[RMDB]
RNA sequence: GGGAACGACUCGAGUAGAGUCGAAAAGAUAUGGACACUCGACCACGCGACGAUCUAGUAUCGGAAACGAUACUAGGGAGCGUGAGUCGAGGUGUCCUAAGUCAAAACCCCAAGUUCGCUUGGGGAAGAAAAACUUAAGCUUCGGCUUAAGUUUUUCAAAAGAAACAACAACAACAAC
Reactivity to 2A3 in 0.01 (KOAc 150mM, MgCl2 10mM, bicine 150mM(pH8.5), 24C), signal-to-noise 2, nucleotides 027 to 126: g020a060u120a040u160g010g000a000c000a000c010u000c000g000a000c000c010a000c010g010c000g080a300c010g010a090u000c000u030a000g000u000a010u010c000g020g000a040a030a030c000g000a010u000a000c000u000a000g010g000g010a000g000c010g000u020g070a080g000u000c010g000a010g010g010u000g000u000c000c000u020a070a000g070u020c040a080a040a110a300c030c010c010c000a010a000g000u050u150c300g040c150u000u020g040g000g050g000a010a170
Reactivity to DMS in 0.01 (KOAc 150mM, MgCl2 10mM, bicine 150mM(pH8.5), 24C), signal-to-noise 2, nucleotides 027 to 126: g000a040u010a300u020g000g000a000c010a050c000u000c000g010a010c020c000a000c000g010c000g000a120c240g010a030u000c000u000a010g000u010a000u020c000g000g010a120a100a240c010g000a020u000a010c000u000a000g000g000g000a030g020c020g020u010g000a060g020u000c000g020a010g000g020u000g010u000c000c000u000a020a100g020u010c020a090a080a160a170c010c000c000c000a020a020g030u010u030c240g010c000u000u000g000g000g000g010a000a020